[RMDB]
RNA sequence: GGGAACGACUCGAGUAGAGUCGAAAACGCUUUAUUCACUGGGGUCGACAACUUUGGGGAGAAAAGGGAGGAUCGGCUGGGAAGAGUAUAUCCUAUGGGAAUCCCCGUUCUCCUCUCAGGUCCAGCCGCAGUCUAAAUAGUUCGCUAUUUAGACUGCAAAAGAAACAACAACAACAAC
Reactivity to DMS in 0.01 (KOAc 150mM, MgCl2 10mM, bicine 150mM(pH8.5), 24C), signal-to-noise 1, nucleotides 027 to 126: c300g010c100u010u020u000a030u000u000c050a140c180u000g000g000g000g010u000c040g020a070c030a130a040c030u010u010u000g000g050g000g000a070g000a040a030a080a080g000g000g000a060g010g000a200u020c040g000g040c130u000g000g010g000a060a090g010a080g030u010a020u000a090u000c010c030u000a070u020g020g000g010a290a120u000c000c010c000c300g010u000u000c010u000c000c010u000c000u000c040a020g000g000u000c030c000a090g000c200c080
Reactivity to 2A3 in 0.01 (KOAc 150mM, MgCl2 10mM, bicine 150mM(pH8.5), 24C), signal-to-noise 2, nucleotides 027 to 126: c040g020c020u050u070u090a110u080u110c040a030c110u100g050g000g020g030u060c030g070a060c060a100a030c060u040u040u020g000g010g010g000a000g030a030a000a010a030g050g030g020a060g010g020a040u030c000g090g030c130u090g030g000g010a040a020g130a030g280u060a050u010a050u170c000c000u020a070u130g090g040g000a020a100u000c060c000c000c000g020u010u010c000u000c000c010u000c010u000c040a020g010g000u010c000c040a020g050c050c060
Source: RMDB library VIROID, as collected in RNAgym. This 177-nucleotide RNA was probed chemically with DMS and 2A3. 2A3 adducts were read by reverse transcription with SuperScript II with manganese. Values cover nucleotides 27 to 126. Reactivities are rounded to 0.1 and cut off at 0 and 3.